[RMDB]
RNA sequence: GGGAACGACUCGAGUAGAGUCGAAAAUCGGAAGUACGCGAUCCAAUCAUCGCCUACAGGUGGAGUGUUCCAACGUACGGAAACCAUCCUAGGCAUGUGUACAAUCCAUCCGAAACGUACGUUAGAGAUUAGUUACCUAUAAGGUACUUACUACGAACAGUAAUCCAUGGUUCGCCAUGGAUUACUGAAAAGAAACAACAACAACAAC
Reactivity to DMS in 0.01 (KOAc 150mM, MgCl2 10mM, bicine 150mM(pH8.5), 24C), signal-to-noise 2, nucleotides 027 to 156: u010c020g040g020a250a200g000u010a040c070g010c000g010a050u020c020c030a160a220u020c010a050u010c080g000c010c050u000a040c010a070g020g100u010g000g020a160g020u000g020u010u010c000c000a050a080c020g050u010a020c000g010g030a030a070a180c010c010a030u010c040c080u000a070g000g000c010a050u010g020u000g020u000a040c040a090a100u000c060c050a110u000c030c030g000a040a110a110c030g000u000a010c010g000u010u000a120g020a150g000a180u000u000a090g020u000u000a020c020c010u000a130u040a070a110g020g020u000a010c060u000u010a080c040u000a090c030g000a110a180
Reactivity to 2A3 in 0.01 (KOAc 150mM, MgCl2 10mM, bicine 150mM(pH8.5), 24C), signal-to-noise 4, nucleotides 027 to 156: u070c030g010g020a040a040g030u040a020c020g030c060g120a090u060c120c040a110a090u130c030a060u110c130g020c010c000u020a050c020a060g030g020u030g030g040a170g060u150g210u070u040c000c010a070a020c110g120u090a040c040g040g000a030a010a010c010c000a010u040c000c010u010a010g000g000c020a020u090g010u000g000u010a010c020a030a140u020c030c020a030u010c000c010g000a090a070a020c030g030u060a010c010g000u030u070a070g020a010g000a180u070u060a050g080u100u050a010c000c000u090a100u070a300a110g010g010u030a020c010u060u000a030c030u030a040c030g090a120a020